[RMDB]
RNA sequence: GGGAACGACUCGAGUAGAGUCGAAAAACUAGUGGGGAUUUGGCGUAACUUUGUUAGCCGCUCUCUCGUCUCAUCCGAAGCGAGGGAAAAGAUUAGGAUUGCCCAUCACUUCCGCCUUGGGGGCUUGAGCAAAGCGAUGGAAAGAGCUUUCAACCCCGAUUCUUAUCACCUUCGGGUGAUAAGAAUCAAAAGAAACAACAACAACAAC
Reactivity to 2A3 in 0.01 (KOAc 150mM, MgCl2 10mM, bicine 150mM(pH8.5), 24C), signal-to-noise 1, nucleotides 027 to 156: a010c090u140a040g050u080g040g050g020g040a030u110u090u140g030g010c020g060u030a030a050c090u060u050u300g010u060u090a010g010c020c000g050c000u000c000u000c000u010c000g100u060c100u070c120a100u050c050c080g010a010a000g000c020g000a000g000g000g010a010a160a040a010g030a080u140u210a050g030g020a010u030u030g040c000c000c010a050u030c000a000c010u070u000c060c030g020c000c000u020u030g030g000g000g010g010c050u020u030g010a010g020c010a010a000a000g000c020g030a030u020g000g010a000a120a000g050a000g010c030u000u060u020c000a000a030c000c010c000c000